[RMDB]
RNA sequence: GGGAACGACUCGAGUAGAGUCGAAAAACAACUACGGUUCGGCAGCAGGGAAGAAAAUUGGCCAAUCCUAAUUCAGGGAGCCAGUGACAAGAAAUAGCAAGCUGGGAAACUUACGUUUCUACGGCAUUGAAAUGAGAACAGUGUAAAUCUCUUAGCGGUUUGCCUGUAUGUUCGCAUACAGGCAAACAAAAGAAACAACAACAACAAC
Reactivity to 2A3 in 0.01 (KOAc 150mM, MgCl2 10mM, bicine 150mM(pH8.5), 24C), signal-to-noise 1, nucleotides 027 to 156: a000c040a070a010c060u070a010c020g090g030u040u100c010g000g000c000a000g060c020a020g160g000g000a030a050g060a010a060a080a070u070u040g000g000c040c000a000a090u070c030c010u060a110a100u300u160c020a010g000g030g000a010g000c000c000a000g040u000g010a010c020a080a010g070a110a050a020u010a040g060c010a040a000g000c000u050g020g000g020a000a010a010c000u200u140a040c240g040u010u010u000c050u090a210c000g020g010c000a000u020u140g010a070a030a000u100g000a060g020a010a000c050a000g010u000g000u000a050a090a090u000c000u000c050u110u080a060g060c040g060
Chemical mapping of a 207-nucleotide RNA with 2A3. It was measured as part of the RMDB library PDB130. Conditions: 150 mM KOAc, 10 mM MgCl2 and 150 mM bicine (pH 8.5), 24 C.